[RMDB]
Conditions: 150 mM KOAc, 10 mM MgCl2 and 150 mM bicine (pH 8.5), 24 C. Chemical mapping of a 177-nucleotide RNA with DMS and 2A3. For 2A3 the reverse transcriptase was SuperScript II with manganese. DMS adducts were read by reverse transcription with MarathonRT.
RNA sequence: GGGAACGACUCGAGUAGAGUCGAAAAUUGCUUUUGUUAGGUCUCCAAGUCGAUCCCUCAAGUCAGCAGUCAGAAUUGCAACAGUUUACUCAUGGGCCUACGGGGAUGAUGAGAAAUCAUGGGGUGACAUGUUCCCAUUUUUCGAAAUGGGAACAUGAAAAGAAACAACAACAACAAC
Reactivity to DMS in 0.01 (KOAc 150mM, MgCl2 10mM, bicine 150mM(pH8.5), 24C), signal-to-noise 5, nucleotides 027 to 126: u010u010g020c090u010u000u000u010g010u000u000a080g010g000u000c010u000c040c050a090a100g010u000c040g010a090u000c010c010c010u000c110a110a110g010u000c080a050g000c060a050g000u000c090a100g010a060a080u000u000g010c060a070a110c110a070g010u010u000u000a060c060u000c060a080u000g010g010g010c030c030u000a050c110g010g010g010g010a050u010g000a050u000g010a100g010a070a080a090u000c030a040u010g000g000g000g010u000g010a120
Reactivity to 2A3 in 0.01 (KOAc 150mM, MgCl2 10mM, bicine 150mM(pH8.5), 24C), signal-to-noise 3, nucleotides 027 to 126: u070u100g080c030u110u080u040u140g100u100u140a070g000g060u020c010u000c060c020a040a020g020u030c020g050a050u030c020c000c010u040c060a060a050g060u040c010a020g000c010a010g060u070c010a020g110a150a180u070u080g030c030a050a020c010a050g000u030u050u100a050c020u060c050a070u090g020g050g020c000c000u010a030c050g000g000g000g030a040u100g010a020u030g030a030g060a040a080a000u070c040a030u080g010g020g030g000u020g020a010